[RMDB]
An RNA of 177 nucleotides, treated with 2A3 and DMS and read out base by base. DMS adducts were read by reverse transcription with MarathonRT. The DMS profile rests on 1,172 reads.
RNA sequence: GGGAACGACUCGAGUAGAGUCGAAAAUUAAAGUACGUAGAAGCGGCGUGAAGCAUGUAGAAAGCUUUGCGAGCAUAUCGAGCUACAUGUGAGCGAAACCGGUUACGUACAACGAUAUGCAAAAAAACAGUUGUUAACGUUUCGACGUUAACAACUGAAAAGAAACAACAACAACAAC
Reactivity to 2A3 in 0.01 (KOAc 150mM, MgCl2 10mM, bicine 150mM(pH8.5), 24C), signal-to-noise 2, nucleotides 027 to 126: u050u030a080a000a040g010u010a000c010g010u000a010g020a200a030g300c010g050g020c010g030u080g030a030a000g030c000a020u010g000u020a000g050a110a150a020g010c010u120u120u110g100c080g030a040g000c020a020u080a020u150c080g020a010g060c000u000a000c000a000u010g050u070g030a040g000c100g060a180a020a000c010c010g000g000u020u010a010c000g010u020a000c000a010a000c020g030a040u020a020u110g000c000a100a050a000a000a000a020a030
Reactivity to DMS in 0.01 (KOAc 150mM, MgCl2 10mM, bicine 150mM(pH8.5), 24C), signal-to-noise 2, nucleotides 027 to 126: u010u000a040a090a110g000u000a000c000g000u010a010g010a130a070g030c030g010g000c050g020u000g000a110a300g030c010a000u000g000u010a010g000a100a110a160g000c050u000u000u000g000c140g000a130g020c010a010u000a020u000c030g000a110g000c010u000a010c010a040u010g010u010g020a120g020c090g000a060a040a120c010c000g000g010u000u000a000c000g040u000a000c020a080a070c080g010a000u010a000u020g000c030a010a000a020a090a060a040a110